RNA sequence: GGGAACGACUCGAGUAGAGUCGAAAAGUGGAUCGCUCUUAUUGAUAGCGAUUUUUAUGAUGAAUAGUUGGAGCGGUAUUCAGAGCGGGCAUAACGCAUUUCGUCCAGUCUCAAAAUCAAAACCAGCACAUAGAACGGUUUUCGAACCGUUCUAUGUAAAAGAAACAACAACAACAAC
Reactivity to DMS in 0.01 (KOAc 150mM, MgCl2 10mM, bicine 150mM(pH8.5), 24C), signal-to-noise 5, nucleotides 027 to 126: g030u020g000g010a030u010c010g000c000u000c080u020u040a140u030u010g010a080u030a040g020c000g000a040u010u010u010u020u010a070u030g000a090u020g010a080a040u010a090g010u020u000g000g010a090g010c040g000g010u010a050u010u010c110a080g000a150g020c110g020g000g000c050a050u020a080a120c140g000c110a090u000u010u000c100g000u000c020c030a100g010u030c020u010c050a040a070a120a070u000c140a020a040a090a090c060c030a070g000c130
Reactivity to 2A3 in 0.01 (KOAc 150mM, MgCl2 10mM, bicine 150mM(pH8.5), 24C), signal-to-noise 8, nucleotides 027 to 126: g100u080g010g030a010u000c000g010c010u010c050u130u260a300u170u240g100a130u160a060g000c010g010a000u020u010u000u000u050a160u040g070a040u040g040a070a130u070a040g030u050u070g020g020a030g050c060g000g040u060a110u030u110c070a040g010a010g070c010g010g020g000c030a040u050a170a060c110g030c090a060u040u080u140c020g020u000c030c000a050g110u050c020u010c030a090a130a040a050u070c040a010a010a050a100c020c020a020g040c030